[RMDB]
RNA sequence: GGGAACGACUCGAGUAGAGUCGAAAAGAUAUGGAUCGCCCUAGGGAGGCUGGUAUCGGAAACGAUAUUCAGCCGAGGAUCUAGGCGAUCCUAAGUCAAAAGUCAACGGUUGUUCGCAACCGUUGACGAGGUAUAGGAUGUUCGCAUCCUAUACCUCAAAAGAAACAACAACAACAAC
Reactivity to 2A3 in 0.01 (KOAc 150mM, MgCl2 10mM, bicine 150mM(pH8.5), 24C), signal-to-noise 7, nucleotides 027 to 126: g010a010u030a020u080g010g010a000u000c010g040c070c050c040u030a020g020g040g030a070g010g010c010u010g000g010u000a000u010c000g000g000a030a010a010c010g000a000u020a020u300u300c020a000g000c010c000g000a010g000g000a020u000c000u010a020g000g000c000g000a000u000c000c000u000a010a000g010u000c010a040a040a100a200g000u000c000a010a000c000g010g020u010u030g060u120u130c300g020c180a000a000c000c000g000u000u000g000a000c000
Reactivity to DMS in 0.01 (KOAc 150mM, MgCl2 10mM, bicine 150mM(pH8.5), 24C), signal-to-noise 7, nucleotides 027 to 126: g000a030u000a140u010g000g000a010u000c000g010c170c100c180u000a020g010g000g010a040g030g040c000u000g010g010u000a000u010c000g010g000a040a040a060c010g010a010u000a000u000u040c010a000g020c000c000g010a050g020g010a110u010c010u000a020g000g010c000g010a000u000c000c000u000a010a060g010u010c010a090a090a120a210g010u000c000a000a010c000g010g010u000u000g010u010u000c290g020c000a000a010c000c000g010u000u000g000a000c010
Structure probing data (2A3 and DMS) for a 177-nucleotide construct. Values are in units of 0.01, from 0 to 300, in steps of 10. DMS adducts were read by reverse transcription with MarathonRT. For DMS, 17,957 sequencing reads were counted.